[RMDB]
RNA sequence: GGGAACGACUCGAGUAGAGUCGAAAACAACGCUUCGGCGUUGAGCAAGAUAUGGAUUGGAACUACUCGGCCCGCGAACUUGGACCUUGCGUCGGAAACGACGCAAGCUAGUUCCCGCCCGAGCCAAUCCUAAGUCCGUUUUUGGAUUCGUCCAAAAAAUAGUUUUUAAAUUCGUUUAAAAACUAUUAAAAGAAACAACAACAACAAC
Reactivity to DMS in 0.01 (KOAc 150mM, MgCl2 10mM, bicine 150mM(pH8.5), 24C), signal-to-noise 1, nucleotides 027 to 156: c020a030a050c000g000c020u010u000c270g100g060c000g000u020u000g020a180g040c040a100a080g000a110u000a260u000g010g000a100u000u000g020g000a060a110c060u000a300c010u000c010g000g000c050c010c020g030c100g000a020a000c010u000u000g030g000a100c170c000u000u000g030c030g040u000c010g010g000a300a180a300c000g020a040c000g050c000a020a000g010c020u000a010g000u000u010c010c030c000g020c190c000c010g010a040g000c000c060a030a080u000c000c000u000a000a140g020u000c020c020g010u000u000u000u000u000g000g000a130u000u010c120g040u000c000c040a000a020a120a060
Reactivity to 2A3 in 0.01 (KOAc 150mM, MgCl2 10mM, bicine 150mM(pH8.5), 24C), signal-to-noise 2, nucleotides 027 to 156: c000a010a000c000g010c000u040u110c280g170g000c010g000u000u010g000a010g060c080a120a040g020a150u090a030u210g000g000a010u000u040g020g010a050a030c130u150a060c010u300c010g000g030c040c090c000g010c060g000a000a000c010u080u170g030g080a130c050c000u000u010g000c000g000u010c000g020g040a090a110a130c010g010a000c000g010c000a000a000g030c000u000a000g000u010u000c030c020c020g010c010c000c000g000a000g000c000c000a000a000u000c010c000u000a030a010g030u000c020c030g070u080u000u010u030u120g030g010a030u080u100c140g050u070c020c000a020a040a030a030